[RMDB]
RNA sequence: GGGAACGACUCGAGUAGAGUCGAAAAGAAAAGAGCGUAAUCGCGUCUUGACGUGAGUGAGCCUAGACUGUAGCCUAUCCCAAGUGGGAUAGUAUAACUCACAAUACGCUGAUCUACAGUCAAAAGACGAGGAUUAUACCUUCGGGUAUAAUCCUCGAAAAGAAACAACAACAACAAC
Reactivity to 2A3 in 0.01 (KOAc 150mM, MgCl2 10mM, bicine 150mM(pH8.5), 24C), signal-to-noise 4, nucleotides 027 to 126: g170a010a080a000a010g070a000g000c010g020u030a050a040u040c010g000c000g020u010c070u130u250g110a010c000g010u000g000a010g010u020g000a000g010c000c020u010a040g000a010c000u000g010u010a010g000c000c000u000a010u010c000c000c020a140a210g290u300g060g000g000a000u000a000g000u020a030u030a020a010c000u000c000a000c000a010a040u010a000c000g000c030u010g010a040u010c000u000a000c000a010g000u010c030a100a030a000a030g100a010
Reactivity to DMS in 0.01 (KOAc 150mM, MgCl2 10mM, bicine 150mM(pH8.5), 24C), signal-to-noise 3, nucleotides 027 to 126: g000a030a110a110a100g010a050g010c020g020u000a050a300u000c000g020c010g010u000c050u040u000g050a050c000g030u000g000a020g060u000g000a000g020c300c070u040a070g000a030c020u000g020u000a010g000c300c000u000a000u000c000c000c000a280a160g000u020g000g000g000a000u000a030g030u010a060u020a130a050c030u000c000a060c000a080a150u000a000c000g020c000u000g000a120u020c000u000a000c000a040g000u000c000a120a080a090a120g000a180

Source: RMDB library OK1LIB, as collected in RNAgym. Structure probing data (2A3 and DMS) for a 177-nucleotide construct.